[RMDB]
The record gives the reactivity of an RNA of 207 nucleotides to 2A3 and DMS. Values cover nucleotides 27 to 156.
RNA sequence: GGGAACGACUCGAGUAGAGUCGAAAAUUUGAGAAAUCAUGUGAUGGCAAAUCUUGCUGGGUUCCUCUAAUUCUAAUAGGUUAUUGGCUCCAUCAGGCAAUAGAUGGUCGUGGACAGGGAGCUACAAGACUCAGCUGACAGGAGACACUGAGCCCCACACGUCCUAAUCAUUCGUGAUUAGGACGUGAAAAGAAACAACAACAACAAC
Reactivity to 2A3 in 0.01 (KOAc 150mM, MgCl2 10mM, bicine 150mM(pH8.5), 24C), signal-to-noise 2, nucleotides 027 to 156: u080u070u040g040a060g000a020a070a010u050c080a040u100g020u080g050a090u060g060g000c010a030a070a230u120c170u170u150g000c030u010g010g000g020u030u020c000c000u000c030u020a060a040u190u000c040u080a090a170u090a220g060g000u120u150a040u060u060g000g020c010u000c030c000a120u030c050a060g060g000c010a070a070u040a170g080a070u130g080g000u040c190g230u070g000g030a030c060a080g010g050g000a010g020c000u020a020c000a040a050g020a000c000u000c050a000g080c040u020g000a000c010a030g000g100a030g000a010c040a040c030u020g020a040g060c000c000c010c010a020
Reactivity to DMS in 0.01 (KOAc 150mM, MgCl2 10mM, bicine 150mM(pH8.5), 24C), signal-to-noise 1, nucleotides 027 to 156: u000u020u000g000a080g040a100a100a060u000c010a020u000g040u010g040a080u000g000g000c000a080a160a100u010c020u000u000g010c030u010g020g020g040u000u000c010c030u000c030u000a050a020u000u000c030u030a090a200u000a100g000g010u000u000a050u000u000g070g000c050u000c030c000a060u000c050a100g020g020c040a090a170u000a200g040a070u020g000g030u000c040g030u010g010g010a150c030a070g010g030g010a090g010c000u000a090c040a060a070g010a060c020u000c030a040g000c010u000g020a160c050a080g010g000a160g040a150c090a040c070u000g010a070g000c050c000c000c060a200
Background: 2A3 adducts were read by reverse transcription with SuperScript II with manganese. The RNA was probed in 150 mM KOAc, 10 mM MgCl2 and 150 mM bicine (pH 8.5) at 24 C.